Structure probing data (DMS and 2A3) for a 177-nucleotide construct. The reactions ran in a buffer of 150 mM KOAc, 10 mM MgCl2 and 150 mM bicine (pH 8.5), at 24 C. The DMS profile rests on 7,771 reads. It was measured as part of the RMDB library TTRDES. In probing experiments dimethyl sulfate is read out at A N1 and C N3, which are open when not base-paired.

RNA sequence: GGGAACGACUCGAGUAGAGUCGAAAAGAUAUGGAUCCACCAGGCAACAGCGAUGGUUCGGAAACGAACCUGUCGACAUGCCUGUGUGGAUCCUAAGUCAAAAGCUUCACUAGUUCGCUAGUGAAGCGCCAAUAUAGCCGUUCGCGGCUAUAUUGGCAAAAGAAACAACAACAACAAC
Reactivity to DMS in 0.01 (KOAc 150mM, MgCl2 10mM, bicine 150mM(pH8.5), 24C), signal-to-noise 5, nucleotides 027 to 126: g000a020u000a140u010g000g000a010u000c000c000a000c000c010a020g000g020c000a120a080c250a170g000c000g000a060u000g010g000u000u000c000g000g000a040a030a070c000g010a010a000c000c000u020g050u000c000g000a040c100a300u000g020c000c000u010g000u030g030u000g000g010a000u000c000c000u000a010a070g000u010c010a120a060a120a210g000c010u000u000c000a000c000u000a000g010u000u010c270g030c000u010a000g010u000g000a000a000g010c010
Reactivity to 2A3 in 0.01 (KOAc 150mM, MgCl2 10mM, bicine 150mM(pH8.5), 24C), signal-to-noise 5, nucleotides 027 to 126: g010a010u030a010u060g000g000a010u000c000c000a000c010c000a000g020g000c070a300a080c100a300g030c000g020a020u040g010g000u000u000c000g000g000a010a000a000c010g000a000a000c010c000u070g120u030c000g020a060c140a250u300g000c000c000u000g010u020g000u000g000g000a000u000c000c000u000a000a000g000u000c010a000a040a050a220g000c000u010u010c000a000c010u000a010g030u060u110c300g050c270u000a010g000u020g000a000a000g010c020